[RMDB]
Chemical mapping of a 207-nucleotide RNA with DMS. For DMS the reverse transcriptase was MarathonRT. The DMS profile rests on 1,028 reads. The reactions ran in a buffer of 150 mM KOAc, 10 mM MgCl2 and 150 mM bicine (pH 8.5), at 24 C.
RNA sequence: GGGAACGACUCGAGUAGAGUCGAAAAUUGGCGAAUGCCUGUGGAUCUACAUUAGUUGCGGGUUCGAGACCCGUCAGAGCCCGGCUCUGUAGCUCAAUGGUAGAGCGGUGUAUUCACAUAAACUUGUAAAAGACACGUGCCUUCGGGCACGUGUCAAUCAAGCUUAGUUCUUCGGAACUAAGCUUGAAAAAGAAACAACAACAACAAC
Reactivity to DMS in 0.01 (KOAc 150mM, MgCl2 10mM, bicine 150mM(pH8.5), 24C), signal-to-noise 1, nucleotides 027 to 156: u000u020g030g020c040g000a200a020u010g050c030c000u000g000u020g010g000a000u000c110u000a030c040a010u000u000a070g020u010u000g010c000g000g030g020u000u000c070g010a300g000a030c010c000c000g020u000c080a010g000a100g010c010c170c280g080g000c020u000c090u030g010u000a050g000c000u000c050a000a020u000g000g000u020a110g010a090g010c000g030g020u000g020u000a030u000u000c020a010c010a140u000a080a070a130c050u010u000g040u000a070a060a160a170g000a080c010a050c000g090u000g000c000c020u010u000c300g020g000g000c010a000c000g000u000g000u010c000a000a000